[RMDB]
RNA sequence: GGGAACGACUCGAGUAGAGUCGAAAAGAACUACGCUCUCGCUGCUUAAGUGAGAUGACGACCGUGCAGCCCGGCCUUUGGCGUCGCGGAAGUCACUAAAAAAGAAGGCUAGCCCAGGCGAUUCUCCAUAGCCGACGGCGAAACUUUAUGGAGCUACCUAGCUAUAGGGGUUCGCCCCUAUAGCUAGAAAAGAAACAACAACAACAAC
Reactivity to 2A3 in 0.01 (KOAc 150mM, MgCl2 10mM, bicine 150mM(pH8.5), 24C), signal-to-noise 1, nucleotides 027 to 156: g040a120a050c080u180a040c130g060c090u020c000u010c010g030c010u090g000c090u300u270a080a010g020u020g020a000g000a010u060g000a000c000g000a000c000c010g000u000g000c020a020g000c000c000c000g060g000c000c010u010u000u010g000g010c000g000u050c000g000c000g000g020a020a000g010u010c100a110c300u230a090a110a020a000a000a000g000a000a000g000g010c020u000a000g000c000c000c000a000g010g000c000g010a010u180u000c010u010c020c000a010u000a010g000c010c000g030a020c030g000g020c000g010a010a000a000c000u150u210u140a020u040g020g000a000g000c000u060a060c000
Reactivity to DMS in 0.01 (KOAc 150mM, MgCl2 10mM, bicine 150mM(pH8.5), 24C), signal-to-noise 1, nucleotides 027 to 156: g000a110a150c070u010a130c110g010c080u000c010u010c010g070c010u000g030c230u000u000a020a080g040u000g000a130g060a080u000g010a120c020g020a200c090c020g000u000g030c100a210g030c030c070c000g000g000c060c030u000u000u000g010g000c020g030u010c000g010c040g000g020a080a230g010u000c000a110c080u000a000a030a080a060a030a170g050a080a050g020g000c040u000a210g050c020c020c020a230g000g000c020g010a060u000u000c050u000c010c020a120u000a300g050c000c030g000a090c160g000g060c030g020a070a090a070c130u000u040u030a030u040g010g010a000g030c110u000a050c080
The data come from the RNA Mapping Database (RMDB), library ARCHII. Chemical mapping of a 207-nucleotide RNA with 2A3 and DMS. Values cover nucleotides 27 to 156. The reactions ran in a buffer of 150 mM KOAc, 10 mM MgCl2 and 150 mM bicine (pH 8.5), at 24 C.